Source information
Conditions: 150 mM KOAc, 10 mM MgCl2 and 150 mM bicine (pH 8.5), 24 C. Structure probing data (2A3 and DMS) for a 177-nucleotide construct. For DMS, 3,329 sequencing reads were counted. DMS adducts were read by reverse transcription with MarathonRT.
RNA sequence: GGGAACGACUCGAGUAGAGUCGAAAAUGGCUUGAUCUGGGCGGGUGCUGGUGCAGCCUCGACCCUCGGCGCCUCCGGAUCGACAGCGGCGGGUGUCUCCUGCUCGGCGAGUUGCUGGCGCGCCGCGCACCCGGUCGAAGUUCGCUUCGACCGGGUGAAAAGAAACAACAACAACAAC
Reactivity to 2A3 in 0.01 (KOAc 150mM, MgCl2 10mM, bicine 150mM(pH8.5), 24C), signal-to-noise 2, nucleotides 027 to 126: u020g020g020c030u060u160g010a020u100c060u110g000g000g080c110g040g020g000u090g000c000u010g020g140u140g060c040a060g040c060c040u030c020g180a170c000c010c020u020c020g030g010c020g030c000c000u040c000c010g000g000a090u060c020g020a040c030a050g000c030g030g030c010g000g110g000u020g000u080c050u020c010c030u030g000c010u030c040g000g060c020g010a110g210u130u250g050c020u040g050g000c050g020c000g000c000c000g010c010g000
Reactivity to DMS in 0.01 (KOAc 150mM, MgCl2 10mM, bicine 150mM(pH8.5), 24C), signal-to-noise 3, nucleotides 027 to 126: u010g020g000c080u000u010g010a030u000c060u000g020g000g030c150g000g010g020u010g020c010u000g020g040u010g010c080a090g010c040c020u000c060g000a150c040c030c060u010c030g010g010c040g010c000c030u000c030c030g020g000a040u010c050g010a040c230a130g000c040g010g030c040g000g010g000u000g000u010c090u000c030c010u000g000c030u000c030g020g000c040g010a080g030u000u000g010c060u000g010g000c300g010c020g000c000c020g010c140g030